[RMDB]
RNA sequence: GGGAACGACUCGAGUAGAGUCGAAAAUUACUCUUGUUAGGUGAAAGUUGAUGGUCGCCGAGCCAGUCCGUACAUCCAAAAAGGACUCAAUGUAGUAGGAAGUCGAGAGCCUAUGAGAGUUAGAGUCAUGCCUAUUUUGUGUUCGCACAAAAUAGAACUCAUACUCCAUCUUCGGAUGGAGUAUGAGAAAAGAAACAACAACAACAAC
Reactivity to 2A3 in 0.01 (KOAc 150mM, MgCl2 10mM, bicine 150mM(pH8.5), 24C), signal-to-noise 2, nucleotides 027 to 156: u100u010a030c000u000c010u020u040g070u110u130a030g000g030u050g070a150a110a080g100u130u140g060a090u080g060g000u050c050g050c140c080g020a000g000c010c000a000g050u010c000c010g020u030a050c030a110u050c060c030a180a000a000a000a000g030g000a010c000u000c020a030a110u130g050u080a030g010u010a020g040g020a090a030g040u100c070g020a060g000a020g140c000c030u000a010u030g010a020g000a000g000u010u030a030g000a010g030u070c030a040u080g070c000c000u010a010u000u000u000u000g030u010g010u000u050c190g000c050a000c000a000a000a000a000u010a000g010a000a040
Reactivity to DMS in 0.01 (KOAc 150mM, MgCl2 10mM, bicine 150mM(pH8.5), 24C), signal-to-noise 1, nucleotides 027 to 156: u000u000a020c020u020c030u000u010g020u000u000a120g060g060u010g050a070a090a150g000u000u020g020a120u010g030g010u000c020g000c060c050g000a180g000c030c030a040g000u000c010c020g020u000a080c080a080u000c090c100a050a040a120a070a150g000g020a040c000u010c020a050a010u000g010u000a150g010u000a100g000g020a090a100g010u000c100g020a180g000a280g040c010c050u010a050u010g000a120g020a040g000u000u000a040g000a140g000u000c090a080u020g030c020c000u000a000u000u020u000u000g050u000g010u010u010c280g070c000a020c010a000a000a000a000u010a040g000a060a110